[RMDB]
RNA sequence: GGGAACGACUCGAGUAGAGUCGAAAACUGGCGCCGGCUGGGCAACAUUCCGAAGGGGACCGUCCCUCGGUAAUGGCGAAUGGGACCCAGAAAUCUCUCUAGAUUCCCAGAGAGAAUCGAGAGAAAACAUACUGAGUCAGUUCGCUGACUCAGUAUGAAAAGAAACAACAACAACAAC
Reactivity to DMS in 0.01 (KOAc 150mM, MgCl2 10mM, bicine 150mM(pH8.5), 24C), signal-to-noise 1, nucleotides 027 to 126: c040u000g010g010c090g000c040c060g000g060c000u000g010g000g000c080a150a080c020a000u000u000c000c010g050a100a070g000g000g000g000a060c220c300g010u010c020c030c010u000c040g050g000u000a020a010u000g050g020c070g010a050a110u020g010g000g000a080c030c020c010a030g010a110a100a110u010c070u000c000u000c000u000a100g030a080u000u000c000c050c080a200g050a140g030a100g000a010a010u000c060g010a060g010a040g010a060a070a050a170
Reactivity to 2A3 in 0.01 (KOAc 150mM, MgCl2 10mM, bicine 150mM(pH8.5), 24C), signal-to-noise 1, nucleotides 027 to 126: c020u040g100g000c100g030c090c000g220g050c050u020g000g100g000c020a010a010c020a020u040u020c000c000g020a220a140g040g000g040g010a160c080c110g300u300c000c000c000u000c000g020g000u050a010a030u020g060g000c080g090a050a050u070g040g030g060a040c000c010c000a010g000a010a060a000u050c050u000c000u000c040u050a170g000a070u000u000c000c020c100a050g020a000g000a000g000a140a010u050c010g030a000g000a020g000a050a110a000a020